[RMDB]
RNA sequence: GGGAACGACUCGAGUAGAGUCGAAAAGGAUCUUCGGAUCCCGUUUAGAUAUGGAGUAUGUGGUGUUGUCAGAUCCAAAUGGAUCGGAAACGAUCCAUGGAUCUUGGAUUUACACGUAACAUCAUACUCCUAAGUCAAUAUGAUUGUUCGCAAUCAAUUCCAAAGUUUGAUUCGUCAAACUUUGGAAAAAAGAAACAACAACAACAAC
Reactivity to 2A3 in 0.01 (KOAc 150mM, MgCl2 10mM, bicine 150mM(pH8.5), 24C), signal-to-noise 2, nucleotides 027 to 156: g010g000a020u020c020u070u100c270g060g010a010u000c010c010c010g010u030u080u280a100g000a030u040a100u150g000g000a000g010u000a000u020g030u040g080g000u000g020u000u050g010u000c000a010g000a010u000c000c000a020a240a190u050g010g010a000u000c020g020g000a070a090a000c000g000a000u000c000c000a000u000g000g000a000u000c000u010u070g040g000a030u150u180u140a010c000a000c030g040u060a060a000c040a100u190c000a000u010a000c000u000c000c000u000a050a020g000u010c030a030a050u100a170u270g050a130u020u030g030u030u040c130g010c090a030a080u120c010a040a100
Reactivity to DMS in 0.01 (KOAc 150mM, MgCl2 10mM, bicine 150mM(pH8.5), 24C), signal-to-noise 2, nucleotides 027 to 156: g010g000a020u000c010u000u000c300g050g010a030u000c010c000c020g020u010u000u000a090g010a080u010a300u000g000g010a030g010u000a010u000g000u010g030g020u000g010u000u000g000u000c020a080g000a020u010c000c010a030a120a210u010g020g010a010u010c010g000g020a120a080a300c010g000a010u000c000c000a070u000g000g010a040u000c010u010u010g000g010a030u000u010u000a040c040a030c020g040u010a070a130c110a050u000c010a020u000a000c000u010c000c000u000a020a090g020u010c050a150a090u010a130u010g000a120u000u000g000u010u010c070g010c050a030a110u000c010a070a300
An RNA of 207 nucleotides, treated with 2A3 and DMS and read out base by base. The data come from the RNA Mapping Database (RMDB), library RNAMAK. Values cover nucleotides 27 to 156. For DMS the reverse transcriptase was MarathonRT. 2A3 adducts were read by reverse transcription with SuperScript II with manganese.